[RMDB]
RNA sequence: GGGAACGACUCGAGUAGAGUCGAAAAGGGUUUGGAUUACAUCAAUAGUAACAUGAGCAGAAGUAAUCAGAACAAGAAGUACUGCGGUUAUUCAAGUUCAAAGUUCACACUAUCGCAAUAAAGGGAACUAACCAGUAACGUUCGCGUUACUGGUUAGAAAAGAAACAACAACAACAAC
Reactivity to DMS in 0.01 (KOAc 150mM, MgCl2 10mM, bicine 150mM(pH8.5), 24C), signal-to-noise 3, nucleotides 027 to 126: g000g000g000u000u000u010g010g000a070u000u000a020c080a080u000c070a060a080u010a100g000u000a080a080c130a080u030g030a070g030c050a080g000a100a040g020u000a050a020u000c030a190g010a020a030c060a050a210g020a030a070g020u010a030c030u010g020c130g020g000u000u000a130u000u020c030a040a210g020u000u010c040a010a080a070g010u000u000c080a040c130a080c070u000a030u000c020g000c080a070a020u010a030a060a100g010g000g010a090a150
Reactivity to 2A3 in 0.01 (KOAc 150mM, MgCl2 10mM, bicine 150mM(pH8.5), 24C), signal-to-noise 2, nucleotides 027 to 126: g110g000g000u080u100u080g100g050a060u060u040a060c030a050u070c020a030a090u050a110g070u050a030a070c050a130u090g070a050g010c010a010g000a160a010g070u070a040a030u060c040a030g030a030a030c010a000a030g100a040a000g020u040a040c030u040g040c010g060g020u010u010a030u000u080c090a080a000g020u000u050c050a140a060a000g010u030u050c050a020c000a010c030u020a030u100c030g030c060a020a060u090a110a140a050g050g000g000a070a000

Source: RMDB library M2PK90, as collected in RNAgym. The record gives the reactivity of an RNA of 177 nucleotides to DMS and 2A3. For 2A3, 1,480 sequencing reads were counted. Conditions: 150 mM KOAc, 10 mM MgCl2 and 150 mM bicine (pH 8.5), 24 C. For DMS, 2,070 sequencing reads were counted.